[RMDB]
RNA sequence: GGGAACGACUCGAGUAGAGUCGAAAACGAGCGGGGUGUUGGUCCACGUCUGUGUGACCAUAUGGUUCAGAUUCAAAUCUUUGGCCCGUUGGACGUGCAUAAAGUCUGGGUCGCGACUGCUGUAUUCGAUGUGACGAGCCAGCAGCAGUCGGUUGCCCCCCUAUGUCAAAUUCGUUUGACAUAGGGGAAAAGAAACAACAACAACAAC
Reactivity to DMS in 0.01 (KOAc 150mM, MgCl2 10mM, bicine 150mM(pH8.5), 24C), signal-to-noise 1, nucleotides 027 to 156: c080g020a120g030c050g000g020g010g060u000g000u000u000g000g020u020c040c030a040c030g020u000c070u000g030u010g020u000g010a040c020c020a050u000a030u020g000g050u000u000c040a110g010a110u000u000c040a040a060a080u000c080u000u010u000g030g040c010c030c030g040u000u000g000g000a080c070g020u000g020c100a110u000a090a070a110g010u000c070u000g030g010g050u000c050g020c030g010a030c010u010g020c010u020g030u010a080u000u000c070g010a150u010g000u020g000a150c030g030a130g020c030c010a160g000c000a010g000c010a020g030u000c010g030g020u010u000g020c000c010
Reactivity to 2A3 in 0.01 (KOAc 150mM, MgCl2 10mM, bicine 150mM(pH8.5), 24C), signal-to-noise 4, nucleotides 027 to 156: c060g020a030g080c050g000g000g000g000u040g030u050u100g010g000u030c020c000a020c020g100u040c190u210g070u020g110u190g040a030c000c000a020u020a050u080g040g000u060u060c030a010g020a130u110u110c090a060a030a150u040c060u080u070u120g020g000c020c010c020g020u060u050g030g020a000c020g010u060g030c060a110u210a190a110a030g020u040c050u110g020g000g010u030c040g000c010g030a010c000u000g010c010u000g020u030a090u070u100c060g040a120u100g070u080g230a150c070g000a020g090c040c020a030g000c000a000g000c000a000g000u000c010g010g000u040u050g000c040c000
Structure probing data (DMS and 2A3) for a 207-nucleotide construct. For 2A3, 2,450 sequencing reads were counted. The DMS profile rests on 4,275 reads. 2A3 adducts were read by reverse transcription with SuperScript II with manganese. DMS adducts were read by reverse transcription with MarathonRT.